Overview: Structure probing data (2A3 and DMS) for a 177-nucleotide construct. For DMS the reverse transcriptase was MarathonRT. Conditions: 150 mM KOAc, 10 mM MgCl2 and 150 mM bicine (pH 8.5), 24 C. The 2A3 profile rests on 6,002 reads. It was measured as part of the RMDB library OK1LIB.

[RMDB]
RNA sequence: GGGAACGACUCGAGUAGAGUCGAAAACAGCCUGUGGGACCUAGCGUUUAGAAGCCUCAGUCAGCAGUGAGGGAGGGGCCAGGCUGGCCUAGCAGCCACUGGAAGGUGCAUUGUAGAGACCCUGCCCCUUAGUGUAGGGGUUCGCCCCUACACUAAGAAAAGAAACAACAACAACAAC
Reactivity to 2A3 in 0.01 (KOAc 150mM, MgCl2 10mM, bicine 150mM(pH8.5), 24C), signal-to-noise 6, nucleotides 027 to 126: c010a010g040c020c010u100g010u140g050g030g060a100c020c020u050a050g050c050g070u050u110u140a140g020a150a030g030c010c010u040c010a070g090u050c040a030g040c030a080g070u040g090a030g000g040g020a080g020g030g010g020c020c000a030g040g000c020u010g020g000c000c010u020a070g000c030a000g030c030c010a050c030u070g020g060a110a030g050g000u050g030c030a060u070u100g050u090a040g000a010g010a120c000c010c010u010g010c010c000c000
Reactivity to DMS in 0.01 (KOAc 150mM, MgCl2 10mM, bicine 150mM(pH8.5), 24C), signal-to-noise 5, nucleotides 027 to 126: c060a050g000c010c000u000g030u030g010g000g000a090c030c020u010a090g010c100g040u030u020u030a100g010a140a120g000c030c000u000c050a080g010u010c060a060g000c090a080g010u030g000a050g000g010g020a100g000g000g000g000c040c020a050g000g000c060u010g010g010c000c020u020a070g010c080a090g000c050c020a080c070u010g010g000a100a070g010g000u010g000c040a070u030u010g020u000a070g000a100g000a070c020c010c000u000g000c010c020c030